[RMDB]
RNA sequence: GGGAACGACUCGAGUAGAGUCGAAAAGAAAUAAUGGAGUUCAAUAAGCACCUUGAGAUAUCUAACGUUGAUCUGUGCAAGAGGAAUUAUCUACGAACUUCACAAACACUAUAUCGAAAGGUGUAAAGGCAUUAGAAUACUUCGGUAUUCUAAUGCCAAAAGAAACAACAACAACAAC
Reactivity to 2A3 in 0.01 (KOAc 150mM, MgCl2 10mM, bicine 150mM(pH8.5), 24C), signal-to-noise 3, nucleotides 027 to 126: g060a010a030a020u160a050a170u130g110g050a170g010u050u030c080a040a090u070a200a000g000c010a010c000c000u000u010g000a000g000a040u010a000u080c080u160a100a100c130g010u010u130g050a080u000c070u020g000u000g020c110a000a000g000a030g020g080a060a220u140u030a120u210c050u050a020c080g050a020a020c000u000u000c000a000c000a020a070a000c020a010c010u070a000u000a000u010c010g000a060a010a010g000g000u000g010u020a030a000a000
Reactivity to DMS in 0.01 (KOAc 150mM, MgCl2 10mM, bicine 150mM(pH8.5), 24C), signal-to-noise 2, nucleotides 027 to 126: g000a190a100a010u010a070a140u010g010g000a080g040u000u010c010a000a150u030a110a110g000c000a040c020c010u070u010g060a300g030a010u000a000u040c130u000a030a080c280g000u000u010g000a080u000c030u000g000u020g000c150a000a050g000a040g000g000a110a080u030u010a060u000c170u030a130c220g010a200a070c020u000u020c000a030c010a010a030a010c060a090c050u020a060u000a000u000c000g020a120a040a000g000g000u000g000u000a040a040a210

This 177-nucleotide RNA was probed chemically with 2A3 and DMS. For DMS the reverse transcriptase was MarathonRT. The DMS profile rests on 1,889 reads. For 2A3 the reverse transcriptase was SuperScript II with manganese. Source: RMDB library OK1LIB, as collected in RNAgym.